This 177-nucleotide RNA was probed chemically with DMS and 2A3.

RNA sequence: GGGAACGACUCGAGUAGAGUCGAAAAGACACGACGGAGACGUCGUGUCAAGUCCAGUGCGAAAGCACUGGACAAAUAAGGGCUGUUAUUCUCGCUGACUUUCAGCCCCAAACAAAAUAUGUCAGCACAGUAUUUUAGGGUUCGCCCUAAAAUACUGAAAAGAAACAACAACAACAAC
Reactivity to DMS in 0.01 (KOAc 150mM, MgCl2 10mM, bicine 150mM(pH8.5), 24C), signal-to-noise 2, nucleotides 027 to 126: g000a020c010a010c000g010a010c020g020g000a280g000a210c030g010u000c010g020u000g000u000c000a010a080g010u000c000c010a000g030u000g010c010g000a110a080a160g020c000a000c000u000g000g010a000c000a000a010a080u020a110a100g010g000g010c000u000g000u000u000a080u010u010c130u010c110g020c000u020g000a030c000u000u000u000c000a010g000c000c000c000c170a030a020a160c050a030a050a030a020u010a030u000g010u000c000a010g040c030a300
Reactivity to 2A3 in 0.01 (KOAc 150mM, MgCl2 10mM, bicine 150mM(pH8.5), 24C), signal-to-noise 3, nucleotides 027 to 126: g000a000c000a000c010g000a000c000g000g020a070g010a070c000g000u000c000g000u000g000u000c000a000a000g010u000c000c000a010g000u010g020c040g110a170a020a020g000c000a000c000u000g000g000a000c010a000a020a000u110a030a040g000g000g000c010u010g040u100u040a120u260u030c120u090c140g020c000u000g000a010c000u030u090u040c020a000g010c000c000c000c020a020a130a020c020a010a050a010a030u180a080u120g010u010c000a000g020c010a000
It was measured as part of the RMDB library OK2TRN. For 2A3 the reverse transcriptase was SuperScript II with manganese. DMS (dimethyl sulfate) methylates the pairing face of unpaired adenines and cytosines. For DMS the reverse transcriptase was MarathonRT.